[RMDB]
RNA sequence: GGGAACGACUCGAGUAGAGUCGAAAAAGGGCACUACCAGGAGUGGAGCCUGCGGCUUAAUUUGACUCAACACGGGGAAACUUACCAGGUCAGGACAUGGGAAGGAUUGACAGAUUGAGAGUUCUUUAACGUAGGAAAAGUUCGCUUUUCCUACGUUAAAAGAAACAACAACAACAAC
Reactivity to DMS in 0.01 (KOAc 150mM, MgCl2 10mM, bicine 150mM(pH8.5), 24C), signal-to-noise 2, nucleotides 027 to 126: a070g040g000g000c030a050c050u000a200c140c020a110g000g030a110g040u020g020g030a080g020c000c010u000g010c060g010g000c010u000u000a060a150u040u000u060g000a050c020u040c030a050a050c080a050c050g000g000g000g000a110a130a050c070u000u020a100c060c040a070g000g000u000c030a080g020g000a100c050a030u000g000g010g000a110a040g000g000a090u010u020g010a090c140a010g000a090u030u000g020a070g000a200g000u020u000c000u000u000u020
Reactivity to 2A3 in 0.01 (KOAc 150mM, MgCl2 10mM, bicine 150mM(pH8.5), 24C), signal-to-noise 6, nucleotides 027 to 126: a000g040g010g010c070a070c110u080a060c040c030a020g070g010a060g070u110g020g050a030g090c010c000u030g030c030g010g000c020u030u030a040a020u140u070u090g030a020c000u000c020a000a060c020a030c080g010g000g010g020a010a080a030c020u040u040a050c010c020a030g000g050u050c020a030g010g040a030c030a080u100g000g030g010a010a030g030g010a010u040u040g020a010c030a030g120a120u060u090g030a070g010a030g130u010u000c000u000u010u000